[RMDB]
RNA sequence: GGGAACGACUCGAGUAGAGUCGAAAAACGGCAUGAUGAUGGACGCCUACGCCAUGCAGGACAAGGCCAUCAUCCGGUCCGACGACAAAGACCUGCGGAUGACGAUCUACCCGUAUUGGGAGAUCGACGUACGUUAAUGUUUCGACAUUAACGUACGAAAAGAAACAACAACAACAAC
Reactivity to DMS in 0.01 (KOAc 150mM, MgCl2 10mM, bicine 150mM(pH8.5), 24C), signal-to-noise 9, nucleotides 027 to 126: a150c060g010g010c070a110u010g000a010u000g010a050u000g000g000a080c130g000c020c010u000a080c080g020c130c150a090u000g010c040a030g010g010a090c130a120a110g010g000c010c010a010u000c000a010u000c010c130g010g010u000c010c000g030a110c090g000a090c130a050a070a080g010a110c020c010u000g020c040g010g010a130u010g010a150c030g010a010u000c000u000a130c010c000c000g020u010a100u010u010g010g000g000a050g000a000u000c000g010a140
Reactivity to 2A3 in 0.01 (KOAc 150mM, MgCl2 10mM, bicine 150mM(pH8.5), 24C), signal-to-noise 9, nucleotides 027 to 126: a000c040g020g000c060a050u140g000a000u010g000a000u030g020g040a040c070g090c030c000u050a050c070g020c060c050a160u290g030c050a060g020g020a070c040a130a070g060g000c010c000a010u010c000a000u000c000c020g040g020u050c010c030g030a070c050g000a020c090a030a120a010g080a120c000c020u040g020c050g060g070a110u130g070a040c020g000a000u020c010u180a300c010c000c010g110u240a300u240u300g000g000g000a010g000a000u000c000g000a020

An RNA of 177 nucleotides, treated with DMS and 2A3 and read out base by base. The data come from the RNA Mapping Database (RMDB), library OK2TRN. High 2A3 reactivity points to a flexible backbone, as in loops and unpaired stretches. 2A3 adducts were read by reverse transcription with SuperScript II with manganese.